[RMDB]
RNA sequence: GGGAACGACUCGAGUAGAGUCGAAAAUAUCUUUGAGGCGCUUCUGCUUUGCCAUCAGGCACCGCUCCCACUGAACUCGCGCACCAGGUCAUCGCCAGCGGCUUCGGUCACUUCCAAGAACUGCUCGCGCAUCUUGGGAAAGCGACCUGCGAUGAAGCGUACUUUGUGCGUUCGCGCACAAAGUACGAAAAGAAACAACAACAACAAC
Reactivity to 2A3 in 0.01 (KOAc 150mM, MgCl2 10mM, bicine 150mM(pH8.5), 24C), signal-to-noise 1, nucleotides 027 to 156: u100a000u030c050u060u090u150g020a090g010g020c000g000c000u050u110c110u150g020c040u090u110u120g100c100c000a080u100c030a060g080g000c000a020c050c000g000c040u040c000c030c000a030c050u030g010a040a020c010u020c080g030c020g000c040a020c030c040a000g030g090u040c020a010u000c070g030c020c000a040g070c020g110g000c020u020u050c010g030g000u000c000a030c040u020u000c010c010a040a000g020a070a100c170u060g000c020u030c060g070c000g030c070a120u040c010u000u000g030g000g000a070a110a000g050c120g020a040c000c010u010g000c000g070a050u030g020a030a000g040
Chemical mapping of a 207-nucleotide RNA with 2A3.